[RMDB]
RNA sequence: GGGAACGACUCGAGUAGAGUCGAAAAUUGCGCCUCCGAUUCGCCGUCGGCAUUUCCCCAGCAGCCAUGACCUACCAGGCUGCGGUGCGGCUCGUCGCACAGGUCAUCCCUCAUCGGGCGCGUCCUGGAUAGGGCUAUACUUUCGAGUAUAGCCCAACGAUUCUAACAACUUCGGUUGUUAGAAUCGAAAAGAAACAACAACAACAAC
Reactivity to DMS in 0.01 (KOAc 150mM, MgCl2 10mM, bicine 150mM(pH8.5), 24C), signal-to-noise 1, nucleotides 027 to 156: u020u010g060c020g020c000c000u000c030c000g000a140u000u030c110g020c030c020g010u010c050g040g020c050a090u010u000u000c050c010c000c000a120g050c030a040g010c010c010a120u050g010a190c100c120u020a120c070c040a170g000g000c010u000g010c000g010g010u000g040c070g010g020c140u000c100g010u000c020g000c070a060c000a060g020g030u010c050a100u000c060c000c030u000c110a120u000c060g010g050g000c020g040c000g020u000c040c030u000g000g010a180u000a100g000g030g030c000u000a020u000a010c020u000u000u000c210g000a050g030u000a000u000a020g000c010c000c000a000a010
Reactivity to 2A3 in 0.01 (KOAc 150mM, MgCl2 10mM, bicine 150mM(pH8.5), 24C), signal-to-noise 3, nucleotides 027 to 156: u110u100g010c030g010c000c030u050c060c040g010a030u110u160c070g020c060c020g040u060c030g030g040c040a050u090u050u030c030c040c000c000a050g000c000a000g000c020c010a200u160g020a070c000c010u040a120c060c040a000g010g000c000u010g000c010g000g000u040g000c000g040g020c060u070c110g130u100c010g030c000a030c020a050g000g030u030c020a120u090c030c000c010u140c030a100u140c070g010g000g010c020g000c030g000u080c010c010u030g090g000a120u110a210g020g010g000c010u000a010u020a010c000u020u100u120c220g040a000g000u000a000u000a010g000c010c000c000a000a000